This 177-nucleotide RNA was probed chemically with 2A3 and DMS.
[RMDB]
RNA sequence: GGGAACGACUCGAGUAGAGUCGAAAAAAAACGAGCGUAAUCGCGUCAUGACUAGACUGUUAGUGACGUGAGUAGGGAUCUAUCCCAGUGUGCAUAGCGCACAAUACGCUGAUUAACAGUCACGGAACAUAACCCAAACGUUCGCGUUUGGGUUAUGAAAAGAAACAACAACAACAAC
Reactivity to 2A3 in 0.01 (KOAc 150mM, MgCl2 10mM, bicine 150mM(pH8.5), 24C), signal-to-noise 2, nucleotides 027 to 126: a000a000a020a050c120g000a010g020c000g000u040a050a110u000c010g000c010g010u000c000a010u030g060a010c050u040a110g010a020c010u010g010u010u040a020g000u020g010a000c010g000u000g000a020g000u040a060g000g000g030a010u100c050u190a220u030c020c000c000a000g050u050g000u010g030c020a120u160a190g080c000g000c020a000c010a010a010u070a010c000g000c000u050g070a190u120u090a050a010c010a010g010u000c030a020c170g090g020a090a010
Reactivity to DMS in 0.01 (KOAc 150mM, MgCl2 10mM, bicine 150mM(pH8.5), 24C), signal-to-noise 3, nucleotides 027 to 126: a040a030a050a080c130g010a040g010c000g020u020a050a080u000c010g030c000g000u000c000a000u010g020a100c170u020a090g010a030c020u010g010u010u000a280g020u000g000a010c000g010u000g010a020g040u020a170g010g010g000a020u010c250u020a060u000c000c000c000a150g010u000g020u000g010c000a180u010a140g030c180g000c010a010c010a060a130u000a010c000g010c010u010g010a120u010u000a040a030c020a030g000u000c030a180c260g000g010a080a100
DMS adducts were read by reverse transcription with MarathonRT. Values cover nucleotides 27 to 126. Conditions: 150 mM KOAc, 10 mM MgCl2 and 150 mM bicine (pH 8.5), 24 C. For DMS, 2,335 sequencing reads were counted.